RNA sequence: GGGAACGACUCGAGUAGAGUCGAAAAGAUCAUUAGCUGUGAUGAAAUUUGUGUCAAAUGUGUUGACGGGUUCAUCACUAUCGUUUAACUUCGGUUGCGAAAACUGGCACAUCUGAGCUUUUGUAGAGGUAACUCUCUAGUUCGCUAGAGAGUUACCAAAAGAAACAACAACAACAAC
Reactivity to DMS in 0.01 (KOAc 150mM, MgCl2 10mM, bicine 150mM(pH8.5), 24C), signal-to-noise 1, nucleotides 027 to 126: g030a140u020c030a040u000u000a060g030c050u000g000u000g000a060u010g020a080a080a110u010u000u000g010u010g010u000c010a010a070a200u010g010u010g020u000u000g010a030c000g000g010g010u020u000c030a000u020c000a010c040u000a220u000c050g010u000u000u010a020a020c030u010u000c140g070g000u000u000g000c010g000a010a010a160a120c200u010g000g000c020a010c070a050u010c030u000g000a030g040c060u000u000u010u000g010u010a080g010a170
Reactivity to 2A3 in 0.01 (KOAc 150mM, MgCl2 10mM, bicine 150mM(pH8.5), 24C), signal-to-noise 1, nucleotides 027 to 126: g070a110u120c020a020u040u020a020g000c010u040g040u020g140a060u040g010a080a070a100u070u040u060g050u020g010u040c000a030a020a110u130g020u040g090u050u080g030a020c050g010g160g040u010u000c010a010u010c000a000c000u010a020u040c030g020u000u090u190a010a000c000u040u050c210g090g000u000u050g000c000g000a000a000a020a130c090u040g030g000c020a010c010a020u050c010u110g070a000g060c000u000u070u030u100g120u060a130g030a050
Structure probing data (DMS and 2A3) for a 177-nucleotide construct. For 2A3, 1,095 sequencing reads were counted. The DMS profile rests on 818 reads.